[RMDB]
RNA sequence: GGGAACGACUCGAGUAGAGUCGAAAAGAAGCUCCAUGCUCAUCUCCUGAUGAGUGCAUAGGAAAGUGCCAUGCAUACACAUAAUAGAAUACUUAGUUACAAAAUUAAUGAUGUACCACUAUCUGUAACACCUGGGAUAGAACCUUAGACUACUCUAUAAUCCAAAAUUAUUCGUAAUUUUGGAUUAAAAAGAAACAACAACAACAAC
Reactivity to 2A3 in 0.01 (KOAc 150mM, MgCl2 10mM, bicine 150mM(pH8.5), 24C), signal-to-noise 3, nucleotides 027 to 156: g050a020a010g050c030u000c040c030a060u080g000c010u010c010a020u020c080u070c080c140u130g030a030u020g000a010g030u060g020c030a030u130a100g030g020a090a090a020g030u040g050c020c000a020u040g000c010a030u170a090c020a010c010a040u160a100a040u090a180g070a140a080u130a140c030u070u080a050g040u050u070a060c030a030a140a110a180u130u170a080a090u140g050a020u050g010u040a040c050c040a010c030u060a040u080c060u040g030u040a050a010c020a030c070c020u040g010g000g000a020u020a100g050a040a040c000c010u010u010a030g030a060c040u020a010c000u080c030u100a070
Reactivity to DMS in 0.01 (KOAc 150mM, MgCl2 10mM, bicine 150mM(pH8.5), 24C), signal-to-noise 1, nucleotides 027 to 156: g000a150a160g020c030u030c020c030a170u010g000c020u000c010a080u000c010u000c210c200u000g000a050u000g000a050g040u000g000c050a080u010a180g010g020a040a050a060g010u000g010c000c040a060u000g010c080a110u000a100c060a060c030a130u000a050a060u000a130g010a160a090u000a080c000u010u000a150g000u000u000a210c030a060a040a130a100u000u000a020a080u000g000a120u000g000u000a030c010c030a100c050u000a050u010c030u000g000u000a050a100c020a040c030c020u000g010g010g020a060u000a100g000a070a100c000c010u010u000a100g020a190c040u000a050c040u000c010u000a250
This 207-nucleotide RNA was probed chemically with 2A3 and DMS. It was measured as part of the RMDB library OK3TST. Values cover nucleotides 27 to 156. For DMS the reverse transcriptase was MarathonRT. In probing experiments dimethyl sulfate is read out at A N1 and C N3, which are open when not base-paired.